Description: Chemical mapping of a 207-nucleotide RNA with DMS and 2A3. The data come from the RNA Mapping Database (RMDB), library OK3TST. Values are in units of 0.01, from 0 to 300, in steps of 10. The reactions ran in a buffer of 150 mM KOAc, 10 mM MgCl2 and 150 mM bicine (pH 8.5), at 24 C.
[RMDB]
RNA sequence: GGGAACGACUCGAGUAGAGUCGAAAAUGAUACCAUUUCACAAGGUUUUGUCCAAGUCCAACUCAAGCUCAGGCUACCAUCAGACCAGUGCCUUAAAAUGGUUUCUGCUCACUCAUUUGCUGAACAAAGGUUGCUUGCAUCAGAAGGUGAAGCAUCAAUUCCCUACGCUAUUCGUAGCGUAGGGAAUAAAAGAAACAACAACAACAAC
Reactivity to DMS in 0.01 (KOAc 150mM, MgCl2 10mM, bicine 150mM(pH8.5), 24C), signal-to-noise 1, nucleotides 027 to 156: u000g000a140u000a150c030c000a120u000u000u000c060a080c080a130a050g010g050u000u000u000u000g000u040c100c020a030a120g020u020c020c030a090a090c020u020c050a100a180g020c030u010c080a070g020g000c020u000a050c060c060a050u000c040a160g010a110c020c020a070g010u000g030c030c010u000u000a070a070a040a030u000g020g000u000u000u020c050u000g000c130u010c040a070c060u010c100a100u010u000u000g050c020u010g010a040a110c070a000a130a100g000g000u000u000g030c030u000u000g030c020a070u000c040a130g020a020a090g030g020u010g030a180a080g030c070a110u000c010a100
Reactivity to 2A3 in 0.01 (KOAc 150mM, MgCl2 10mM, bicine 150mM(pH8.5), 24C), signal-to-noise 4, nucleotides 027 to 156: u120g020a020u080a080c030c010a020u060u050u080c130a130c050a130a080g040g000u040u060u090u090g060u050c120c020a050a040g030u000c050c030a040a060c070u070c110a090a040g010c040u030c040a020g050g000c030u060a090c040c020a070u090c060a010g010a050c040c000a010g020u020g080c010c000u110u090a060a160a040a000u070g030g000u030u070u000c010u020g010c010u010c010a030c010u080c020a070u050u100u150g020c020u080g040a070a040c050a070a130a030g090g000u040u050g020c030u020u090g010c030a040u020c020a050g090a200a030g020g010u030g020a030a000g030c010a040u030c030a020